[RMDB]
The data come from the RNA Mapping Database (RMDB), library OK2TST. Structure probing data (DMS and 2A3) for a 177-nucleotide construct.
RNA sequence: GGGAACGACUCGAGUAGAGUCGAAAAAUUGCGAUAGCCGAAACCAAUCCGCACCUGGAUGUGGCGAUCGUUUCCAAGGUGUACCCGAUGCGCAGCCACACCGUCUCGGCUGAGGGCGGCGCCGCGGUCUACGUUCCACUUUCGAGUGGAACGUAGAAAAAGAAACAACAACAACAAC
Reactivity to DMS in 0.01 (KOAc 150mM, MgCl2 10mM, bicine 150mM(pH8.5), 24C), signal-to-noise 3, nucleotides 027 to 126: a040u010u010g020c010g000a020u000a090g040c010c010g000a100a140a180c160c140a140a040u010c000c060g000c060a050c100c060u010g010g010a040u000g020u000g010g010c000g010a030u010c000g020u000u000u000c030c020a110a040g020g000u000g020u010a100c200c000c010g000a030u000g000c000g020c020a030g010c000c010a070c030a040c010c000g010u010c140u010c070g020g000c260u000g010a120g000g000g020c010g000g010c000g000c010c070g010c020g010g000
Reactivity to 2A3 in 0.01 (KOAc 150mM, MgCl2 10mM, bicine 150mM(pH8.5), 24C), signal-to-noise 2, nucleotides 027 to 126: a000u060u270g000c010g000a040u070a030g010c030c050g130a230a040a050c060c020a070a030u010c040c020g030c060a080c030c050u050g040g000a020u020g070u040g060g000c000g030a040u030c000g000u070u050u000c050c040a070a020g080g010u090g000u080a090c060c000c000g010a030u050g000c020g000c030a000g010c020c010a010c020a040c040c000g140u090c110u130c180g000g020c070u020g010a300g060g030g040c040g040g020c010g020c010c010g000c030g000g000